[RMDB]
RNA sequence: GGGAACGACUCGAGUAGAGUCGAAAAAAGUUGCACCAGGUACGGAUACCAGUCGUUGCCAAACAGGGUGACAUGAGGAUCACCCAUGUACUGUCCCUUGGCAGCCGUACCUGGUGCUGGUGAAAAAUUCCAUAGCCACAUUCGUGUGGCUAUGGAAAAAAGAAACAACAACAACAAC
Reactivity to DMS in 0.01 (KOAc 150mM, MgCl2 10mM, bicine 150mM(pH8.5), 24C), signal-to-noise 2, nucleotides 027 to 126: a060a100g010u010u000g000c020a010c010c000a000g000g000u000a000c000g000g000a030u000a100c160c070a040g010u000c040g040u000u000g030c000c010a000a030a020c050a050g020g010g010u000g010a010c030a170u020g020a140g000g010a190u010c010a020c010c000c000a060u010g020u000a080c180u010g000u000c010c000c000u000u000g000g020c010a020g010c000c000g010u000a030c000c000u000g000g000u000g000c000u000g000g000u010g000a050a030a070a050a120